[RMDB]
RNA sequence: GGGAACGACUCGAGUAGAGUCGAAAACGACUGUAUUGCGUAGCGAGAGGUGAAAGUUGACGACCUACGUAGGACAAACCGAAGCGAAAGCUGUCGUCCAGUACGUUUCCGGUGAUCAAGGACGUAAUCACAAUUGACCGUUCGCGGUCAAUUGUGAAAAAGAAACAACAACAACAAC
Reactivity to DMS in 0.01 (KOAc 150mM, MgCl2 10mM, bicine 150mM(pH8.5), 24C), signal-to-noise 1, nucleotides 027 to 126: c040g030a010c030u000g000u010a180u000u000g030c000g000u000a110g020c020g030a080g000a250g010g050u000g000a120a120a080g000u000u000g010a150c080g010a070c250c030u030a010c020g030u010a020g020g000a010c070a030a120a090c150c030g040a070a010g020c020g000a120a070a080g030c010u000g000u030c080g020u000c040c060a110g000u010a120c000g000u000u000u000c040c050g040g040u000g000a080u050c080a040a120g010g000a060c050g010u000a100a120
The data come from the RNA Mapping Database (RMDB), library RFMREP.
Chemical mapping of a 177-nucleotide RNA with DMS.
DMS adducts were read by reverse transcription with MarathonRT.
For DMS, 638 sequencing reads were counted.